[RMDB]
RNA sequence: GGGAACGACUCGAGUAGAGUCGAAAACUGAUCUUCGGAUCAGGGGCCCCCGUAGGAUGCUAUAAUCUGGCACCACAAUGACGGGUCCUUCGAAAGAGGGACCUAAGACAGUGGACCAGGUAGCAUCCUAAACGGCGCAAAUUGCCUUCGGGCAAAACUAUUAUGUCAUCUUCGGAUGACAUAAUAGAAAAGAAACAACAACAACAAC
Reactivity to 2A3 in 0.01 (KOAc 150mM, MgCl2 10mM, bicine 150mM(pH8.5), 24C), signal-to-noise 3, nucleotides 027 to 156: c000u000g000a000u020c010u020u090c300g160g000a020u010c000a000g020g010g070g030c000c000c000c000c000g010u020a000g000g010a000u010g000c010u030a030u060a270a300u170c000u010g010g000c160a300c250c010a010c030a030a300u160g020a060c060g010g010g010u000c000c010u020u000c000g080a140a040a060g010a000g020g000g020a000c000c000u000a020a010g040a010c030a010g020u010g000g020a040c000c000a000g020g000u000a000g000c000a000u010c000c000u000a000a000a010c000g030g000c110g000c210a110a100a150u060u060g000c000c000u050u100c190g000g000g000c000a030a030a020a010
Reactivity to DMS in 0.01 (KOAc 150mM, MgCl2 10mM, bicine 150mM(pH8.5), 24C), signal-to-noise 1, nucleotides 027 to 156: c010u020g000a000u000c040u000u000c230g080g000a040u010c000a000g030g000g050g000c000c030c110c000c010g060u010a040g010g000a000u000g020c000u000a100u000a300a190u000c040u000g020g000c010a240c000c010a000c000a200a140u010g010a130c100g000g000g010u000c000c010u010u000c000g000a120a130a300g000a010g000g000g000a020c000c000u000a010a050g000a100c140a100g030u010g020g010a100c000c030a040g020g000u000a010g000c000a000u000c000c000u000a000a040a050c020g020g000c120g010c070a100a180a200u000u000g000c020c020u010u010c300g020g060g020c010a020a010a150a140